[RMDB]
RNA sequence: GGGAACGACUCGAGUAGAGUCGAAAACAAACACAAACGCGCAACGGAGUGCCGGUGGAUGGAGCGUAUCUUAUGUACUAGUGUGCGAGUGACGCACACGUUUAUACGGCCCAUAAACGUACAUUUAGCAGCAUCUACGCGCGAACGAGGGCCGAAAGACUCCUCGUUCGUUCGCGAACGAGGAGUCAAAAGAAACAACAACAACAAC
Reactivity to 2A3 in 0.01 (KOAc 150mM, MgCl2 10mM, bicine 150mM(pH8.5), 24C), signal-to-noise 3, nucleotides 027 to 156: c020a000a080a000c050a000c000a040a160a040c040g000c000g000c010a000a090c020g070g000a120g030u060g140c010c000g040g000u020g000g000a000u010g020g080a080g040c020g020u100a080u070c070u040u040a030u040g000u000a010c030u020a020g000u010g000u000g000c000g010a060g130u190g110a040c010g000c000a010c000a000c010g000u000u000u010a010u000a000c020g000g000c000c000c000a000u000a000a010a000c010g000u010a000c000a010u040u060u190a050g010c070a010g010c000a010u030c000u030a020c050g010c020g000c020g030a000a020c060g040a090g000g010g000c000c000g020a000a000a000
Reactivity to DMS in 0.01 (KOAc 150mM, MgCl2 10mM, bicine 150mM(pH8.5), 24C), signal-to-noise 2, nucleotides 027 to 156: c050a070a080a240c080a130c050a090a180a080c020g060c000g000c030a110a190c130g010g050a130g030u000g040c040c000g030g030u000g000g010a050u000g000g010a160g060c020g020u000a070u000c120u000u010a070u010g030u000a060c050u000a050g030u000g040u020g010c020g020a260g040u020g020a200c020g000c000a030c010a010c000g000u000u000u000a020u010a060c020g060g010c010c010c070a230u000a010a010a030c010g010u000a040c030a060u000u000u000a100g030c040a100g000c020a080u000c030u000a040c010g020c050g000c030g020a080a100c120g020a060g010g000g010c000c040g000a030a050a140